This 177-nucleotide RNA was probed chemically with DMS and 2A3. The data come from the RNA Mapping Database (RMDB), library RFM100. Values are in units of 0.01, from 0 to 300, in steps of 10. Conditions: 150 mM KOAc, 10 mM MgCl2 and 150 mM bicine (pH 8.5), 24 C. 2A3 adducts were read by reverse transcription with SuperScript II with manganese.
RNA sequence: GGGAACGACUCGAGUAGAGUCGAAAAGAAAGAAAGAAACUCGUUGAUGAAGUUUUCUCGAUUGUUCUGGUCCAUCUCUAUUUUUGUGAUGGACCAAUACAACCGCGAACCCGUCAUCAUCGCCUAAUCCAAUACGUGUCUUCGGACACGUAUUGGAAAAAGAAACAACAACAACAAC
Reactivity to DMS in 0.01 (KOAc 150mM, MgCl2 10mM, bicine 150mM(pH8.5), 24C), signal-to-noise 1, nucleotides 027 to 126: g010a090a130a070g010a110a080a030g020a110a030a000c070u000c000g010u000u000g000a010u000g000a000a040g000u000u020u000u010c020u010c000g010a090u000u000g010u000u010c060u000g000g020u010c000c000a000u000c000u000c060u030a060u040u020u010u010u010g060u000g020a000u000g000g000a000c000c000a000a000u000a010c000a000a060c080c010g000c170g020a010a000c060c070c000g000u010c000a010u000c010a020u000c020g020c010c010u000a110a110
Reactivity to 2A3 in 0.01 (KOAc 150mM, MgCl2 10mM, bicine 150mM(pH8.5), 24C), signal-to-noise 3, nucleotides 027 to 126: g080a020a070a000g100a030a110a020g090a060a110a020c030u010c000g000u040u020g000a020u010g010a010a030g020u010u040u050u000c040u010c000g010a020u000u010g000u030u000c070u020g010g000u000c000c000a030u000c040u000c000u100a300u140u180u040u190u260g060u020g000a000u000g000g000a000c010c000a000a000u000a010c000a010a000c010c000g010c020g010a000a010c000c010c030g010u000c000a010u000c000a000u010c020g010c000c030u060a080a040